Chemical mapping of a 177-nucleotide RNA with DMS and 2A3.
For DMS the reverse transcriptase was MarathonRT.
Reactivities are given for positions 27 through 126.
Conditions: 150 mM KOAc, 10 mM MgCl2 and 150 mM bicine (pH 8.5), 24 C.
For DMS, 4,652 sequencing reads were counted.

RNA sequence: GGGAACGACUCGAGUAGAGUCGAAAAGAUAUGGACCCUGAACUACGCUGAACUGGAGCGAAGAACAAAUUAACAUCGGAAACGAUGUUAAUUUGGGAGCUCCUAAGUAAGCGCAGGGUCCUAAGUCGAUUAGUUGAAAGUUCGCUUUCAACUAAUCAAAAGAAACAACAACAACAAC
Reactivity to DMS in 0.01 (KOAc 150mM, MgCl2 10mM, bicine 150mM(pH8.5), 24C), signal-to-noise 4, nucleotides 027 to 126: g000a080u010a240u010g000g010a010c000c000c000u000g000a120a080c160u010a300c020g000c010u000g000a180a180c270u000g000g000a000g010c010g020a080a140g030a150a220c010a010a000a010u010u000a000a010c000a010u000c010g000g000a160a080a230c000g020a010u000g010u000u000a010a000u010u000u000g010g000g000a150g000c000u000c000c000u010a000a020g010u000a060a030g000c030g000c000a010g020g010g010u010c000c000u000a010a070g010u000c050
Reactivity to 2A3 in 0.01 (KOAc 150mM, MgCl2 10mM, bicine 150mM(pH8.5), 24C), signal-to-noise 3, nucleotides 027 to 126: g090a040u150a080u170g000g010a000c010c010c000u000g020a110a020c090u220a070c300g020c000u010g000a020a000c020u010g020g010a010g030c030g210a290a050g040a170a040c000a000a000a000u000u000a010a000c010a010u000c010g070g000a100a050a050c010g000a010u000g010u000u000a000a000u000u000u000g010g000g000a010g000c000u000c000c000u000a000a000g000u010a000a010g010c020g000c000a000g000g000g000u010c000c000u000a000a010g050u030c070